[RMDB]
RNA sequence: GGGAACGACUCGAGUAGAGUCGAAAACGUUCGGUUCGCCGAACGAAAAAAGAUAUGGACGUCGAAAGUCUUUUGACGCAAACAAGGUCGGAAACGACCUUGAAUUUGCGAUAAGACUAGACGUCCUAAGUCAAAAAGCAUACCUUCGGGUAUGCAACGGUAGGAAGCAGUUCGCUGCUUCCUACCGAAAAGAAACAACAACAACAAC
Reactivity to 2A3 in 0.01 (KOAc 150mM, MgCl2 10mM, bicine 150mM(pH8.5), 24C), signal-to-noise 1, nucleotides 027 to 156: c010g000u010u030c000g000g100u080u050c300g040c030c000g040a010a010c000g000a030a000a010a000a000a000g090a060u110a060u140g000g000a010c000g010u000c020g030a300a230a130g010u070c060u040u060u060u190g180a080c080g000c000a000a010a010c000a000a000g010g000u000c080g010g020a070a090a090c020g000a000c000c000u000u000g000a020a020u000u000u000g010c020g010a010u030a070a020g010a000c000u030a020g000a000c000g000u010c010c000u000a000a000g040u000c020a000a000a040a040a130g020c000a000u030a000c000c000u050u070c250g110g000g000u000a000u000g000c010a000a010